Overview
The record gives the reactivity of an RNA of 177 nucleotides to DMS and 2A3. For 2A3, 3,280 sequencing reads were counted. The reactions ran in a buffer of 150 mM KOAc, 10 mM MgCl2 and 150 mM bicine (pH 8.5), at 24 C.

[RMDB]
RNA sequence: GGGAACGACUCGAGUAGAGUCGAAAAGAUAUGGAUGUAUGAGUAGACCUGAACUACUCUAUCUGUAUUUGGAUUCGGAAACGAAUCCAAAUACAGUAAGGAGCAGGUCGAAAGUACAUCCUAAGUCGAACCCUCUAAAGUUCGCUUUAGAGGGUUCAAAAGAAACAACAACAACAAC
Reactivity to DMS in 0.01 (KOAc 150mM, MgCl2 10mM, bicine 150mM(pH8.5), 24C), signal-to-noise 1, nucleotides 027 to 126: g020a090u000a300u010g010g010a000u000g000u000a020u000g000a050g050u010a120g020a000c000c000u000g000a080a080c080u020a300c010u010c000u020a230u000c010u000g020u000a000u000u000u000g000g020a010u000u000c000g000g000a170a120a240c020g030a020a020u000c020c000a000a010a010u000a010c000a000g000u020a100a230g000g000a020g000c000a000g000g070u000c010g020a060a070a300g020u000a000c000a010u000c000c000u000a020a130g000u000c070
Reactivity to 2A3 in 0.01 (KOAc 150mM, MgCl2 10mM, bicine 150mM(pH8.5), 24C), signal-to-noise 1, nucleotides 027 to 126: g090a060u140a070u220g010g020a030u020g000u010a000u030g000a010g020u020a010g000a000c010c010u010g040a150a060c070u230a060c000u300c010u020a090u030c000u000g010u000a000u000u000u030g000g000a000u000u010c000g010g070a030a080a130c010g000a000a040u000c010c010a000a000a000u020a010c000a000g000u010a080a230g050g020a010g020c000a020g050g000u030c010g000a000a000a000g000u000a000c010a000u010c000c030u000a000a000g010u020c040

For DMS the reverse transcriptase was MarathonRT.